RNA sequence: GGGAACGACUCGAGUAGAGUCGAAAAUAAACUACACAUUACCAUCUGGGAUCAGAAACUACUCAAUAUCCAUUCUAUGUUUAUGACAAGAGCACUGAACAUUAAAUGCUACUGAAGUGCAAAUUUCAAGCACUAUCCUACAUCACCCCAUAGGGAACAUUUUACCGUGCUUCGGCACGGUAAAAUGAAAAGAAACAACAACAACAAC
Reactivity to 2A3 in 0.01 (KOAc 150mM, MgCl2 10mM, bicine 150mM(pH8.5), 24C), signal-to-noise 1, nucleotides 027 to 156: u080a010a040a000c060u090a080c040a000c000a090u110u000a160c020c020a040u050c010u030g000g010g030a040u060c010a010g080a040a070a030c000u080a010c050u070c060a040a040u040a050u110c020c000a000u070u050c000u130a130u110g090u070u100u030a060u000g040a030c010a160a050g040a000g120c030a050c100u030g040a010a000c000a000u070u040a000a110a000u080g020c010u030a090c020u000g060a030a030g000u020g040c040a010a140a180u140u200u100c030a010a000g040c000a000c010u040a080u070c020c020u130a030c030a040u070c020a110c010c010c010c010a010u040a010g040g000g040a040a020